RNA sequence: GGGAACGACUCGAGUAGAGUCGAAAAUGAGGGGUACAAUUGAUAGUUCCAUAGAAUGUUUCACAAGGGGGAUGAGCGAUCAAUGUGAAGAGAGAUGAAUUAAUCAGGUGAGAGUCCUUUACAAUUAUCCGUGGAGUAUUUUCGAAUACUCCACGGAAAAAGAAACAACAACAACAAC
Reactivity to DMS in 0.01 (KOAc 150mM, MgCl2 10mM, bicine 150mM(pH8.5), 24C), signal-to-noise 1, nucleotides 027 to 126: u030g000a060g030g000g020g030u000a060c050a090a100u020u000g000a100u000a120g010u000u000c050c050a040u000a110g010a050a110u020g000u000u000u000c050a060c170a040a150g010g000g020g020g010a110u000g000a110g000c100g000a080u030c010a050a040u000g020u010g020a040a080g000a120g000a130g000a040u000g000a050a020u000u000a070a070u010c090a010g000g010u000g000a130g010a110g000u000c040c050u000u000u000a060c130a090a110u000u020a060